Record summary:
Chemical mapping of a 177-nucleotide RNA with DMS and 2A3.
RNA sequence: GGGAACGACUCGAGUAGAGUCGAAAAUCUUAGUAGCAUAUUAGUAAUCGUCUUAUGCUACUGGGAGUCUGUGUAGAUAGUUUCUACACAGACUCCAGUAGUCAGUAGAGUAAGACGACUGACUGCAGAUAGUAUUGGCAUUCGUGUCAAUACUAUCAAAAGAAACAACAACAACAAC
Reactivity to DMS in 0.01 (KOAc 150mM, MgCl2 10mM, bicine 150mM(pH8.5), 24C), signal-to-noise 7, nucleotides 027 to 126: u010c010u000u010a070g010u010a070g010c040a050u010a120u020u010a030g000u010a120a150u020c040g020u010c000u000u000a000u020g000c000u000a000c000u000g000g000g000a010g010u000c000u000g010u000g010u000a010g000a020u020a150g020u030u020u000c000u000a000c000a000c000a000g000a000c000u000c000c000a030g000u030a090g010u070c030a020g000u000a030g010a160g030u000a030a030g000a060c030g010a010c070u010g010a040c150u000g010c070a160
Reactivity to 2A3 in 0.01 (KOAc 150mM, MgCl2 10mM, bicine 150mM(pH8.5), 24C), signal-to-noise 9, nucleotides 027 to 126: u020c010u020u030a030g010u030a010g030c020a020u050a050u080u040a030g030u060a050a070u040c010g010u000c000u000u000a000u020g010c000u000a000c000u000g050g050g010a010g000u000c000u000g000u000g010u000a000g000a030u030a080g170u080u080u000c000u000a000c000a000c000a000g000a000c000u000c000c000a000g000u020a000g030u020c030a010g020u030a020g030a010g040u020a000a000g000a000c000g000a000c000u010g020a010c000u010g000c010a020